This 177-nucleotide RNA was probed chemically with 2A3 and DMS. Conditions: 150 mM KOAc, 10 mM MgCl2 and 150 mM bicine (pH 8.5), 24 C. The data come from the RNA Mapping Database (RMDB), library OK1LIB.
RNA sequence: GGGAACGACUCGAGUAGAGUCGAAAAGCUGGUCCGGCGCCCAAUUUUCGUUGCUGGCAUCCCGAAAACGGGCGUAAUCUUGGAGCAGAUGGAUGGGUGGCAGCGAGCCCAAAAGUUUUGCUGCAUACCCUCCAUAGAGCUUCGGCUCUAUGGAGGGAAAAGAAACAACAACAACAAC
Reactivity to 2A3 in 0.01 (KOAc 150mM, MgCl2 10mM, bicine 150mM(pH8.5), 24C), signal-to-noise 3, nucleotides 027 to 126: g010c000u020g040g190u030c010c000g010g040c020g020c020c030c020a140a150u050u030u020u030c070g050u020u120g050c090u020g110g030c020a100u110c050c080c040g020a040a010a000a000c040g000g010g000c030g010u080a080a070u100c050u100u300g010g010a040g030c000a010g020a090u100g110g000a090u180g000g030g020u040g020g000c000a020g030c000g000a020g050c000c020c000a120a230a000a020g060u100u130u080u060g010c010u020g000c010a000u100a050
Reactivity to DMS in 0.01 (KOAc 150mM, MgCl2 10mM, bicine 150mM(pH8.5), 24C), signal-to-noise 1, nucleotides 027 to 126: g000c000u020g000g020u000c060c000g070g000c050g030c000c000c000a060a140u000u010u000u040c010g000u060u050g000c120u000g000g020c070a040u030c040c060c000g000a050a000a010a140c300g000g000g000c000g000u000a110a060u000c100u030u000g000g010a050g000c000a000g000a090u010g020g000a170u010g000g000g000u020g010g000c000a000g000c000g020a000g000c010c020c060a090a060a110a150g000u010u000u000u000g000c000u000g000c000a220u000a020
For 2A3 the reverse transcriptase was SuperScript II with manganese.